[RMDB]
RNA sequence: GGGAACGACUCGAGUAGAGUCGAAAAUCGAUCCUAUGGUACGUACUCUAGCGAUCCUGAUCCACUAGCUAUGUACUGGUACGAUCGAUCUAGCCAUGCAUGCGUACGAUCACUAGUCUAGAGGAUCGCAUCGAUUAUGUUUCGACAUAAUCGAUGCAAAAGAAACAACAACAACAAC
Reactivity to 2A3 in 0.01 (KOAc 150mM, MgCl2 10mM, bicine 150mM(pH8.5), 24C), signal-to-noise 5, nucleotides 027 to 126: u060c000g030a040u030c010c030u110a110u180g080g000u120a060c030g030u010a030c020u010c020u070a010g020c000g030a050u020c000c060u080g010a030u030c020c000a030c040u020a000g030c020u040a040u270g030u050a060c040u070g090g000u030a030c050g010a050u070c040g010a020u010c070u070a030g060c060c030a050u120g050c030a060u140g030c000g040u050a030c020g030a050u050c010a030c070u050a010g070u090c000u030a030g030a020g050g000a010u020c030
Reactivity to DMS in 0.01 (KOAc 150mM, MgCl2 10mM, bicine 150mM(pH8.5), 24C), signal-to-noise 4, nucleotides 027 to 126: u010c070g010a050u010c020c040u010a080u000g020g020u000a070c110g010u010a030c090u020c010u000a050g020c050g000a060u010c060c080u010g010a030u000c040c030a130c020u000a030g000c280u000a020u010g020u010a050c100u010g010g020u000a040c150g010a030u000c100g000a030u010c050u000a130g010c080c120a070u010g000c130a080u000g020c030g010u010a040c040g000a040u000c080a020c060u000a040g000u000c030u000a030g010a080g000g010a030u000c030